[RMDB]
RNA sequence: GGGAACGACUCGAGUAGAGUCGAAAAUGCUGGAGGUGGAAGGCGACCGCAUGCGUGAUGGCACGCCUGGCUACAUCAAGGGCAGCGUGCACGACCUGAUGUGCCUGGUGAUGGACCGGACUCGCAAGCACCAGAACUUUGGUGUGGUCACAGGCUAGCUACUGAAUCUCUUCGGAGAUUCAGUAGCAAAAGAAACAACAACAACAAC
Reactivity to DMS in 0.01 (KOAc 150mM, MgCl2 10mM, bicine 150mM(pH8.5), 24C), signal-to-noise 1, nucleotides 027 to 156: u000g050c040u000g000g020a140g050g010u020g010g040a090a100g030g010c010g020a080c030c010g000c060a120u000g020c110g060u000g000a210u000g030g030c020a130c040g000c010c000u010g030g040c010u010a010c010a060u000c020a070a160g010g000g030c060a160g020c190g020u010g010c040a200c100g010a070c070c040u000g010a080u000g010u000g000c010c000u000g040g040u010g000a200u010g060g000a140c060c000g070g000a100c110u020c000g000c010a130a120g050c020a010c020c050a160g020a070a030c060u020u000u000g120g010u000g000u000g000g070u010c010a120c110a040g010g020c020u000a170
Reactivity to 2A3 in 0.01 (KOAc 150mM, MgCl2 10mM, bicine 150mM(pH8.5), 24C), signal-to-noise 3, nucleotides 027 to 156: u080g020c020u060g030g020a060g020g050u100g020g060a050a030g010g030c050g010a040c020c020g050c050a050u070g010c060g040u060g000a050u090g050g010c060a010c000g020c000c010u010g030g040c000u110a010c010a000u010c030a110a110g030g000g000c050a070g070c080g080u140g060c070a020c120g050a080c020c020u040g020a070u050g040u080g050c000c000u020g000g050u070g050a190u080g000g040a050c000c020g000g040a040c010u010c030g010c020a040a020g000c000a010c010c010a040g060a140a130c050u080u050u100g010g000u040g010u040g000g010u060c020a000c050a110g040g000c010u020a010

This 207-nucleotide RNA was probed chemically with DMS and 2A3. Reactivities are rounded to 0.1 and cut off at 0 and 3. For 2A3 the reverse transcriptase was SuperScript II with manganese. For DMS, 1,800 sequencing reads were counted. The RNA was probed in 150 mM KOAc, 10 mM MgCl2 and 150 mM bicine (pH 8.5) at 24 C. DMS adducts were read by reverse transcription with MarathonRT.